[RMDB]
RNA sequence: GGGAACGACUCGAGUAGAGUCGAAAAGCCGCCGCCCGUGCGGGGUGGUCACUGGAUCGGAUCAACAGCAGCUACGAGGCGAUCCUCAACCUCGCGUUUGUCGUGGGCCCCAGGAUCGGCGGCCUGACAGUGGUAUAGCUUUCGAGCUAUACCACUGAAAAGAAACAACAACAACAAC
Reactivity to DMS in 0.01 (KOAc 150mM, MgCl2 10mM, bicine 150mM(pH8.5), 24C), signal-to-noise 4, nucleotides 027 to 126: g000c000c010g040c020c020g030c130c000c020g010u040g010c040g000g000g000g020u010g000g010u020c190a040c290u010g000g020a010u010c020g000g020a070u010c010a100a190c090a120g000c060a070g000c040u020a160c150g010a020g010g020c040g000a030u010c000c000u020c070a120a030c000c000u000c000g000c020g000u050u020u040g000u030c080g020u020g000g020g020c020c010c000c050a090g000g000a080u020c020g000g000c020g000g000c020c010u000g020a280
Reactivity to 2A3 in 0.01 (KOAc 150mM, MgCl2 10mM, bicine 150mM(pH8.5), 24C), signal-to-noise 8, nucleotides 027 to 126: g010c000c000g000c010c000g020c000c000c020g080u090g050c050g000g010g000g010u020g020g070u170c070a040c180u090g010g020a040u020c010g010g090a060u050c050a040a120c020a080g160c010a020g050c050u140a080c090g070a020g140g070c000g000a030u000c000c020u050c020a050a070c000c010u040c010g020c030g030u080u160u190g170u090c110g010u110g030g030g040c010c000c000c010a020g020g040a060u080c000g000g000c000g000g000c000c000u040g010a010